[RMDB]
RNA sequence: GGGAACGACUCGAGUAGAGUCGAAAAGUAUAUGAAAUUUUAGGCCUUAAUGCCAGAGGACAAAGUAUACGUGCUUCAGUGACUCCUCAACCCCGACCAUCCAGAGGUAGAGGUCGAGGUCAAAAUAUAGUCAAGUACAGUUCGCUGUACUUGACUAAAAAGAAACAACAACAACAAC
Reactivity to 2A3 in 0.01 (KOAc 150mM, MgCl2 10mM, bicine 150mM(pH8.5), 24C), signal-to-noise 1, nucleotides 027 to 126: g020u000a060u030a030u080g090a080a170a100u120u120u020u060a060g030g000c000c010u070u180a090a000u270g050c060c030a030g020a040g060g000a020c040a090a080a050g060u000a070u040a090c020g050u090g070c010u000u060c020a130g030u040g100a060c010u010c000c030u010c030a020a050c000c020c000c030g050a020c000c020a190u090c020c060a090g030a060g240g110u160a070g080a020g020g010u010c010g000a000g050g000u000c010a000a000a190a000u240a010
Reactivity to DMS in 0.01 (KOAc 150mM, MgCl2 10mM, bicine 150mM(pH8.5), 24C), signal-to-noise 2, nucleotides 027 to 126: g020u010a020u000a010u000g010a090a220a100u000u000u000u000a250g050g020c000c130u000u000a230a080u000g020c060c040a110g010a070g030g030a080c030a030a070a290g010u000a010u000a070c000g010u000g050c060u010u000c060a090g020u020g000a070c150u000c000c040u000c040a070a020c010c020c010c000g030a010c020c000a110u000c110c130a110g000a140g010g010u020a080g030a040g000g000u000c010g020a010g000g010u000c090a090a050a030a100u000a130
The record gives the reactivity of an RNA of 177 nucleotides to 2A3 and DMS. The data come from the RNA Mapping Database (RMDB), library OK2TRN. The reactions ran in a buffer of 150 mM KOAc, 10 mM MgCl2 and 150 mM bicine (pH 8.5), at 24 C. The 2A3 profile rests on 681 reads. For DMS the reverse transcriptase was MarathonRT. 2A3 adducts were read by reverse transcription with SuperScript II with manganese.